An RNA of 207 nucleotides, treated with DMS and 2A3 and read out base by base. For DMS the reverse transcriptase was MarathonRT. Reactivities are given for positions 27 through 156. For 2A3 the reverse transcriptase was SuperScript II with manganese. Conditions: 150 mM KOAc, 10 mM MgCl2 and 150 mM bicine (pH 8.5), 24 C. For DMS, 14,098 sequencing reads were counted.
[RMDB]
RNA sequence: GGGAACGACUCGAGUAGAGUCGAAAAGCGUACUACGUACCUUGGGAGCGUUGAAAGCAAUCCGAGUAGGCUCCCAAAUAGGAGCCUACGUUUGACGAUUGCUGGAGCUCCCUUGGUACGUAUCGCAAAUACGUAAGUGGGUUCGCCCACUUACGUACUAUAGUCAUGACUUCGGUCAUGACUAUAGAAAAGAAACAACAACAACAAC
Reactivity to DMS in 0.01 (KOAc 150mM, MgCl2 10mM, bicine 150mM(pH8.5), 24C), signal-to-noise 3, nucleotides 027 to 156: g010c010g040u000a060c090u000a010c010g000u000a020c000c000u000u000g020g010g020a030g020c010g010u000u010g000a190a190a090g000c000a030a020u000c000c010g010a190g010u000a030g020g000c000u000c000c000c000a020a060a080u010a070g010g010a030g000c000c000u000a010c000g020u000u000u000g030a170c140g000a020u000u010g010c000u000g000g000a290g010c000u000c010c000c000u010u000g000g010u000a000c010g030u000a000u000c010g010c020a080a100a190u000a010c000g010u000a010a000g030u000g010g010g010u000u010c300g010c000c010c000a010c000u000u000a000c010g020u000a020
Reactivity to 2A3 in 0.01 (KOAc 150mM, MgCl2 10mM, bicine 150mM(pH8.5), 24C), signal-to-noise 3, nucleotides 027 to 156: g010c010g010u070a100c060u000a000c030g000u000a000c000c000u000u010g000g030g010a010g010c020g110u300u120g050a030a030a000g000c000a000a000u000c020c010g000a000g000u000a000g000g000c000u040c000c030c060a100a100a010u210a100g020g000a010g080c010c010u010a000c010g020u060u070u160g040a030c020g000a000u000u010g020c000u010g000g000a000g010c000u000c010c000c000u000u020g000g000u020a000c000g010u010a010u010c000g010c000a000a000a050u050a000c000g000u000a000a000g000u010g010g020g050u030u100c220g150c040c000c010a000c000u000u000a000c000g010u000a000